[RMDB]
RNA sequence: GGGAACGACUCGAGUAGAGUCGAAAAUGACCACUAAUUGGACAUCUCUUUGAAGCGAGUUUUUCAAACGUGUGCAUGAAGUGUCUUGACUGCCGCCGACCCGGUAGCCAACAUAUACUGAAGGUCGGAUCCGUAGGGGCUUCGGCCCCUACGGAUCAAAAGAAACAACAACAACAAC
Reactivity to 2A3 in 0.01 (KOAc 150mM, MgCl2 10mM, bicine 150mM(pH8.5), 24C), signal-to-noise 2, nucleotides 027 to 126: u150g060a020c040c040a000c120u080a080a060u010u060g000g080a000c010a010u030c000u000c000u050u040u080g030a030a000g050c090g080a130g210u150u000u000u000u010c010a010a040a010c020g000u000g030u070g090c030a030u020g000a070a000g000u000g010u000c000u000u030g020a040c020u000g060c000c000g030c030c010g010a020c000c000c000g030g000u010a000g040c000c000a090a150c000a070u240a010u080a110c150u210g100a120a030g020g000u000c000g000
Structure probing data (2A3) for a 177-nucleotide construct. The reactions ran in a buffer of 150 mM KOAc, 10 mM MgCl2 and 150 mM bicine (pH 8.5), at 24 C. Values are in units of 0.01, from 0 to 300, in steps of 10. Reactivities are given for positions 27 through 126.